[RMDB]
RNA sequence: GGGAACGACUCGAGUAGAGUCGAAAAGCUCGCUUUUAGUCCGACUCCGUUAACGGCUAAAACGAAACCCCAACGGAUGCACCUUUUAGUUACUUUCGGUUGACUAAUUGCGUAAAGACUUCACCGAAACAUCCUACUAUCAGGGAUAAUUGAUAGUCUGAGUACAACCGUUCGCGGUUGUACUCAGAAAAGAAACAACAACAACAAC
Reactivity to 2A3 in 0.01 (KOAc 150mM, MgCl2 10mM, bicine 150mM(pH8.5), 24C), signal-to-noise 1, nucleotides 027 to 156: g060c030u040c090g090c070u040u000u020u020a010g030u000c060c010g030a050c030u040c030c000g010u010u010a030a020c020g010g000c000u000a000a000a070a070c120g140a100a070a080c050c040c040c050a000a020c000g020g000a000u000g000c020a010c010c010u000u000u020u000a000g010u000u010a020c020u090u040u000c000g010g010u010u000g000a000c000u010a020a000u000u040g070c100g040u020a030a030a010g110a030c090u150u070c250a010c030c010g030a000a000a020c040a090u040c010c010u040a100c010u010a010u010c000a030g000g030g000a070u070a220a070u120u020g000a000u000a000g020u020